[RMDB]
RNA sequence: GGGAACGACUCGAGUAGAGUCGAAAAUGAAAUAAAGCGUACGAAGAACCACGUACGCAAACAGAAAAGCGGACCUACGAGCGCACAGCGCUCAGGUAUGAGCGCAAAACAUAGGAAAUGAAAAAAACCAUGUAAUUAUGUUCGCAUAAUUACAUGGAAAAGAAACAACAACAACAAC
Reactivity to DMS in 0.01 (KOAc 150mM, MgCl2 10mM, bicine 150mM(pH8.5), 24C), signal-to-noise 4, nucleotides 027 to 126: u010g010a090a100a100u020a100a120a140g000c000g010u010a010c000g020a070a090g010a140a140c090c100a110c000g020u000a000c000g030c010a050a100a080c180a150g000a080a050a100a120g010c030g000g000a080c000c000u000a060c140g000a080g010c030g030c030a070c190a150g000c000g010c000u010c000a010g010g010u010a030u010g000a040g020c010g010c000a070a040a080a050c080a040u000a030g000g000a080a100a080u010g000a000a000a060a070a040a090a090
Reactivity to 2A3 in 0.01 (KOAc 150mM, MgCl2 10mM, bicine 150mM(pH8.5), 24C), signal-to-noise 4, nucleotides 027 to 126: u070g010a030a030a040u190a080a110a020g000c000g000u010a010c010g070a220a110g040a140a060c020c000a020c020g010u010a010c010g010c010a010a020a000c060a010g110a020a070a030a000g020c010g000g030a020c010c000u040a050c080g070a020g010c010g000c020a080c070a230g000c010g000c000u000c010a000g000g020u090a110u120g050a030g050c000g000c000a030a070a020a000c020a020u100a030g050g080a060a120a050u210g080a090a060a050a030a010a000a020

An RNA of 177 nucleotides, treated with DMS and 2A3 and read out base by base. Reactivities are given for positions 27 through 126. In probing experiments dimethyl sulfate is read out at A N1 and C N3, which are open when not base-paired. The DMS profile rests on 4,088 reads.